[RMDB]
RNA sequence: GGGAACGACUCGAGUAGAGUCGAAAAAAGUACCCUUCGGGGUACUUAUGGAUCCUAAGUCUGCCUUGAGCCUGCAUCAAUGAUGUUGUCGGAAACGACAAUUGAGAGCAGGCAAUGAUGGGCAGAUAUGGAGUUGCUUCGAUCUUCGGAUCGAAAACCUAUACCCGCAUUUCGAUGCGGGUAUAGGAAAAGAAACAACAACAACAAC
Reactivity to DMS in 0.01 (KOAc 150mM, MgCl2 10mM, bicine 150mM(pH8.5), 24C), signal-to-noise 1, nucleotides 027 to 156: a050a000g000u000a000c020c000c010u020u010c240g060g030g000g000u010a000c000u000u010a020u010g030g010a150u000c000c000u010a050a240g010u000c020u010g010c000c000u000u000g000a070g040c010c010u000g000c000a300u000c020a040a080u000g020a060u010g020u010u010g020u000c000g010g010a170a060a250c000g010a050c010a040a020u000u000g010a130g020a090g040c020a030g000g000c000a010a010u000g020a100u000g000g000g010c020a000g020a000u010a090u010g020g010a250g000u000u000g000c030u010u000c010g000a010u000c020u000u010c300g050g010a040u000c000g010a020a030a090a170

An RNA of 207 nucleotides, treated with DMS and read out base by base. The DMS profile rests on 2,599 reads. The data come from the RNA Mapping Database (RMDB), library RNAMAK.